[RMDB]
RNA sequence: GGGAACGACUCGAGUAGAGUCGAAAACGCAAAGCUGCAGCGCGGCGCUCUGGAGGCCUUGCCCCGCGCACUGCUCUUUACAUGGCCCGACGUGAGGGGACUUCGCGGGCAGUGCUGCGGCCUCGUGAAACUGCCCCUAAGUUCGCUUAGGGGCAAACUUAUUGGUAGCGUUCGCGCUACCAAUAAGAAAAGAAACAACAACAACAAC
Reactivity to 2A3 in 0.01 (KOAc 150mM, MgCl2 10mM, bicine 150mM(pH8.5), 24C), signal-to-noise 1, nucleotides 027 to 156: c170g010c050a040a050a000g010c010u120g020c010a030g040c010g040c030g260g000c100g000c060u030c030u130g090g000a010g020g040c000c040u120u120g180c030c000c020c000g000c010g010c000a010c000u050g050c000u030c040u000u150u060a170c110a180u130g070g000c000c000c000g130a110c010g090u110g090a090g010g010g000g020a150c040u070u030c030g000c000g010g040g020c000a010g070u000g000c030u030g000c030g000g000c010c020u010c000g000u000g000a110a020a000c020u020g010c020c010c000c010u010a010a000g010u020u210c240g020c080u000u010a010g000g000g000g000c000a000a000a000